[RMDB]
RNA sequence: GGGAACGACUCGAGUAGAGUCGAAAAGAAAGAAAGAAAAAUGGCUGUCACUCUUUCCUUAACUCAUGCCGCUGUGCAUUCUCUUCUUUCGCAACAGGGUGGGUUGAGUACAAAGUGCCGGUCUAAACUAUCAACGGGGUUUCGACCCCGUUGAUAGAAAAGAAACAACAACAACAAC
Reactivity to DMS in 0.01 (KOAc 150mM, MgCl2 10mM, bicine 150mM(pH8.5), 24C), signal-to-noise 1, nucleotides 027 to 126: g020a060a000a070g000a100a100a140g000a030a090a080a070a100u020g020g020c000u000g000u000c020a020c020u000c060u010u010u000c180c020u000u000a010a020c000u000c030a040u020g020c040c000g040c030u000g000u040g000c050a120u010u000c080u000c090u000u000c070u000u020u020c010g020c060a040a050c100a110g000g000g000u020g010g000g000u000u000g020a020g000u010a180c120a070a120a000g000u000g000c020c000g000g000u000c000u000a010a100a120
Reactivity to 2A3 in 0.01 (KOAc 150mM, MgCl2 10mM, bicine 150mM(pH8.5), 24C), signal-to-noise 4, nucleotides 027 to 126: g100a030a090a000g100a030a080a010g140a030a140a040a010a010u140g000g000c000u000g000u010c000a010c010u020c040u030u050u040c030c000u000u000a000a000c000u000c000a010u170g220c030c040g020c080u050g010u020g040c020a090u180u040c090u000c010u280u110c040u140u210u160c100g010c000a030a050c020a030g000g030g000u040g000g030g000u000u000g010a000g010u030a020c060a050a060a000g000u000g000c000c000g020g000u010c000u010a040a060a070